[RMDB]
Source information
An RNA of 177 nucleotides, treated with DMS and 2A3 and read out base by base. Reactivities are given for positions 27 through 126. DMS adducts were read by reverse transcription with MarathonRT.
RNA sequence: GGGAACGACUCGAGUAGAGUCGAAAACGGGUAGCGAACCACUCCGAAUACUGCAUCCCCAUCGGCGGGCUCGAAGCUCGAGUUGAGCCCGCCGAAGUAGGUCGUUCGGACGGUCACGCCCGAUCACCCUAAAGAGGCGAUUCGUCGCCUCUUUAGGAAAAGAAACAACAACAACAAC
Reactivity to DMS in 0.01 (KOAc 150mM, MgCl2 10mM, bicine 150mM(pH8.5), 24C), signal-to-noise 2, nucleotides 027 to 126: c040g010g000g000u000a080g070c040g020a170a030c010c010a130c270u010c010c000g000a020a070u010a070c080u000g020c070a100u010c040c010c020c060a270u000c000g000g020c020g030g010g010c000u000c000g010a030a100g020c100u000c190g000a060g000u010u000g000a020g020c000c000c000g020c000c000g000a000a010g020u000a050g020g020u010c140g010u000u010c000g020g000a040c190g000g020u000c020a060c000g010c000c010c030g000a090u010c100a100c070
Reactivity to 2A3 in 0.01 (KOAc 150mM, MgCl2 10mM, bicine 150mM(pH8.5), 24C), signal-to-noise 1, nucleotides 027 to 126: c010g000g010g000u080a100g060c010g080a070a030c000c000a030c170u070c010c000g000a050a020u050a070c060u040g020c050a280u300c080c000c000c020a040u020c010g000g040c030g000g000g030c010u010c000g040a070a020g060c040u170c190g090a100g040u040u040g000a000g000c000c000c000g000c000c000g020a000a000g000u040a000g020g070u060c080g030u020u000c000g000g050a020c020g030g010u030c000a000c010g000c010c000c010g000a040u080c020a070c030